[RMDB]
RNA sequence: GGGAACGACUCGAGUAGAGUCGAAAAGAGAAGGGGACCAGAGGCCAAGUGGAGUAGUGCUCCCACUACAUGGAUGUUGCAACAGGUUCCUGGUAGCAAGGGAAAUGCAGUUGCUGAUCUCAGGGGAAGGAGGAGGUGGAUUCGUCCACCUCCUCCUAAAAGAAACAACAACAACAAC
Reactivity to 2A3 in 0.01 (KOAc 150mM, MgCl2 10mM, bicine 150mM(pH8.5), 24C), signal-to-noise 1, nucleotides 027 to 126: g180a000g010a110a000g010g000g000g030a010c000c020a030g000a040g050g000c030c100a000a240g070u110g100g030a030g020u160a000g030u000g190c000u050c000c030c000a000c030u080a030c040a050u000g040g000a030u150g000u160u060g050c050a090a100c050a160g010g080u020u000c020c000u000g000g030u130a090g120c070a080a070g070g000g010a000a000a000u100g000c010a110g090u030u060g030c000u060g070a090u070c070u010c030a110g090g100g000g050a000
Reactivity to DMS in 0.01 (KOAc 150mM, MgCl2 10mM, bicine 150mM(pH8.5), 24C), signal-to-noise 1, nucleotides 027 to 126: g060a090g010a010a300g000g010g000g000a090c040c040a160g000a060g000g000c030c000a050a090g030u000g000g010a140g000u000a040g000u000g000c260u010c030c220c030a300c000u010a030c040a130u060g030g000a100u000g000u000u120g120c040a050a070c090a040g000g020u050u000c030c020u000g000g000u000a200g000c050a130a000g000g020g040a040a060a040u030g000c030a030g050u000u000g000c020u000g000a120u000c000u000c080a050g000g000g050g000a160